RNA sequence: GGGAACGACUCGAGUAGAGUCGAAAAGGCGCGAACUACCAACUGUUUGACCGAUAGCACCGGCAGUCCGCGCGGGUCGGCCAGCUCCACCGACACCGACCCCGCAUCCGCCGGGGUGAUGCGUACCUCAGGGGAGGGGAUUCGUCCCCUCCCCUGAAAAAGAAACAACAACAACAAC
Reactivity to DMS in 0.01 (KOAc 150mM, MgCl2 10mM, bicine 150mM(pH8.5), 24C), signal-to-noise 2, nucleotides 027 to 126: g020g040c000g010c010g000a050a070c040u050a030c040c020a140a080c080u040g030u000u000u000g020a120c050c020g020a070u000a090g000c070a100c030c020g000g030c000a020g000u000c170c020g000c000g030c130g000g000g000u000c000g000g000c140c080a180g010c090u020c070c000a020c120c030g010a090c240a240c050c040g000a010c000c010c000c020g000c050a050u000c050c000g000c050c000g000g000g000g020u000g000a060u040g010c000g000u020a110c040c040
Reactivity to 2A3 in 0.01 (KOAc 150mM, MgCl2 10mM, bicine 150mM(pH8.5), 24C), signal-to-noise 3, nucleotides 027 to 126: g050g020c020g020c010g060a020a000c040u090a120c060c030a100a110c030u050g120u150u150u150g080a050c020c020g070a070u080a030g040c050a030c050c000g000g000c000a020g020u020c070c070g000c000g000c180g050g000g000u010c010g030g000c130c070a040g010c050u060c050c000a090c060c040g010a030c020a000c030c000g000a000c000c000c000c000g000c000a020u040c030c000g050c000c020g000g000g000g010u100g010a090u220g010c030g010u080a100c000c020
An RNA of 177 nucleotides, treated with DMS and 2A3 and read out base by base. The 2A3 profile rests on 1,561 reads. The data come from the RNA Mapping Database (RMDB), library OK1LIB.